[RMDB]
An RNA of 177 nucleotides, treated with 2A3 and read out base by base. Reactivities are given for positions 27 through 126. For 2A3, 776 sequencing reads were counted.
RNA sequence: GGGAACGACUCGAGUAGAGUCGAAAAAGUGAUGAUGAGGACCUCGCAACAUCCGGCUCAGGGUCCGGAGAACGAGAACCCCACACAACUUCUGAUGCGGUCACCAAGCAAGGGCUUUCAUCAACAAGCUACGGGACAGGUUCGCCUGUCCCGUAGCAAAAGAAACAACAACAACAAC
Reactivity to 2A3 in 0.01 (KOAc 150mM, MgCl2 10mM, bicine 150mM(pH8.5), 24C), signal-to-noise 2, nucleotides 027 to 126: a020g110u080g100a240u000g000a030u080g000a120g040g000a030c000c000u010c020g000c020a070a050c000a140u000c010c000g000g000c000u040c200a060g090g000g090u080c050c000g000g000a020g000a030a000c000g030a000g000a040a030c000c000c000c000a000c000a000c040a000a000c000u070u020c020u060g060a070u080g040c020g000g030u070c040a050c180c010a040a020g110c010a010a100g030g000g010c000u010u150u160c020a070u050c010a000a090c040a010a010